Structure probing data (2A3 and DMS) for a 177-nucleotide construct. 2A3 adducts were read by reverse transcription with SuperScript II with manganese. The DMS profile rests on 1,670 reads.
[RMDB]
RNA sequence: GGGAACGACUCGAGUAGAGUCGAAAAUAGAAGGCCCGAAAUUAUCAUCUAUCAUGAUAAGGCAAUCCUUCCAGCAAUCAGGGGUCUUGUGCGGCAGAUGAUGGAGACCAAAGUCUUUAACAUUAAGCGAGACACUUGGAUUCGUCCAAGUGUCUCGAAAAGAAACAACAACAACAAC
Reactivity to 2A3 in 0.01 (KOAc 150mM, MgCl2 10mM, bicine 150mM(pH8.5), 24C), signal-to-noise 2, nucleotides 027 to 126: u110a010g180a090a060g080g000c000c010c040g030a120a090a070u070u060a020u030c010a000u000c090u240a090u140c040a070u120g020a020u040a030a000g010g030c040a020a220u090c010c000u050u050c020c020a090g030c040a050a060u080c070a110g020g050g000g000u050c030u010u060g020u050g000c000g070g000c050a000g040a050u070g000a000u060g030g020a000g020a010c000c040a130a000a000g030u040c010u050u070u010a120a010c040a120u050u090a040a020g070
Reactivity to DMS in 0.01 (KOAc 150mM, MgCl2 10mM, bicine 150mM(pH8.5), 24C), signal-to-noise 2, nucleotides 027 to 126: u040a090g030a080a050g000g040c010c000c000g090a120a090a100u060u000a010u000c000a000u000c210u070a070u020c230a080u000g000a000u000a000a010g020g070c060a170a290u010c000c010u020u000c000c110a100g080c090a110a040u090c080a160g070g020g000g060u000c030u000u010g040u010g020c110g010g010c020a070g000a050u000g010a040u010g000g000a000g020a040c050c140a070a060a090g000u000c020u010u000u000a140a090c140a050u010u020a080a070g000